[RMDB]
RNA sequence: GGGAACGACUCGAGUAGAGUCGAAAACAUUACACGUGACAUUCUAAAGUGGAUCCGUAUACACCUAUAAUGUGACCUUAGGAGGAUGAGUCGAUGAGGCAUUAAGCGUGACUCAAUGACAAGGAGCGAGUGUAAGUGGAUUCGUCCACUUAUAUUCAAAAGAAACAACAACAACAAC
Reactivity to 2A3 in 0.01 (KOAc 150mM, MgCl2 10mM, bicine 150mM(pH8.5), 24C), signal-to-noise 9, nucleotides 027 to 126: c020a040u080u160a030c040a000c060g050u060g050a020c010a060u070u000c040u150a120a050a030g040u040g030g020a040u010c020c010g020u030a040u020a040c060a020c010c010u030a030u020a120a100u090g050u050g070a040c010c000u020u060a040g000g060a010g020g020a040u060g020a020g010u010c020g020a070u050g020a030g050g000c010a010u040u060a070a030g060c030g040u030g020a020c000u000c030a020a110u130g030a040c030a050a050g120g000a070g100c090
Reactivity to DMS in 0.01 (KOAc 150mM, MgCl2 10mM, bicine 150mM(pH8.5), 24C), signal-to-noise 9, nucleotides 027 to 126: c050a070u010u010a070c090a060c120g010u010g010a100c070a050u000u000c070u000a050a120a100g020u000g000g000a060u000c050c050g010u000a070u000a130c080a060c040c050u000a070u010a040a050u000g010u000g010a070c040c040u000u000a070g010g010a080g000g010a100u000g010a120g010u000c020g010a090u000g010a050g000g000c020a040u000u000a080a110g040c190g000u000g010a040c020u000c020a030a120u000g010a050c060a080a100g000g010a180g010c200